[RMDB]
RNA sequence: GGGAACGACUCGAGUAGAGUCGAAAAAAUUCUUUGCAUUUUAAGACGAACUACAUACUAUGACAAAUAAGCUUGCAGUGAACGGUGAAUUAGUGUGUGAAACUGUAAGGACGGCCCGUCGGUAGACACGUCGGUAAUCAUUCGUGAUUACCGACGUAAAAGAAACAACAACAACAAC
Reactivity to 2A3 in 0.01 (KOAc 150mM, MgCl2 10mM, bicine 150mM(pH8.5), 24C), signal-to-noise 3, nucleotides 027 to 126: a000a000u210u060c080u060u110u060g060c050a120u110u080u030u140a120a050g030a060c060g020a160a070c030u130a010c020a050u140a000c040u050a020u150g090a050c050a000a100a060u240a090a000g050c000u050u110g000c080a020g040u030g110a060a020c020g080g010u070g050a100a100u110u110a050g070u020g070u020g010u020g070a060a040a030c000u000g000u040a010a010g000g010a010c000g040g050c000c020c000g050u020c070g030g010u040a000g000a050c030
Reactivity to DMS in 0.01 (KOAc 150mM, MgCl2 10mM, bicine 150mM(pH8.5), 24C), signal-to-noise 3, nucleotides 027 to 126: a080a050u020u000c010u000u010u010g010c040a000u010u010u020u000a040a110g000a060c110g010a120a080c070u050a040c030a040u000a040c020u000a070u020g030a210c050a060a090a100u020a050a150g000c000u030u040g040c090a060g020u030g010a090a140c300g000g020u000g000a060a150u010u010a030g020u000g030u000g010u020g000a050a060a070c100u000g020u010a010a020g000g010a060c230g000g000c000c010c010g000u010c010g000g000u010a030g010a080c200